[RMDB]
RNA sequence: GGGAACGACUCGAGUAGAGUCGAAAAGAUAUGGAAUCCCAUACAGCAUCGAUCGUGAGGAUCGGAAACGAUCCCACGGGAGCUGUGGGAUUCCUAAGUCAAACAGUACAACUUCGGUUGUACUGAACACCUUAAAAUUCUUCGGAAUUUUAAGGUGAAAAGAAACAACAACAACAAC
Reactivity to DMS in 0.01 (KOAc 150mM, MgCl2 10mM, bicine 150mM(pH8.5), 24C), signal-to-noise 5, nucleotides 027 to 126: g000a000u000a010u000g000g000a020a010u000c000c000c000a110u020a070c130a010g030c000a300u000c200g000a010u010c010g010u000g000a220g010g010a010u000c000g030g000a000a000a020c000g010a010u000c000c000c000a000c010g020g020g000a010g030c000u000g010u000g000g000g000a010u000u000c000c000u000a000a060g000u000c000a160a130a290c020a000g010u000a000c000a010a010c000u000u010c230g020g010u000u000g020u000a000c000u000g000a120a210
Reactivity to 2A3 in 0.01 (KOAc 150mM, MgCl2 10mM, bicine 150mM(pH8.5), 24C), signal-to-noise 3, nucleotides 027 to 126: g000a000u010a000u050g000g000a000a010u000c010c020c020a030u230a080c070a010g050c000a020u300c130g010a010u000c010g020u010g000a250g020g020a000u000c000g000g000a000a000a000c000g000a000u000c010c010c000a000c010g000g000g000a010g000c000u010g000u010g000g000g010a000u000u000c000c000u010a000a000g000u000c020a050a040a180c010a000g010u000a000c000a010a010c010u060u080c220g230g000u010u000g000u000a000c000u000g000a040a000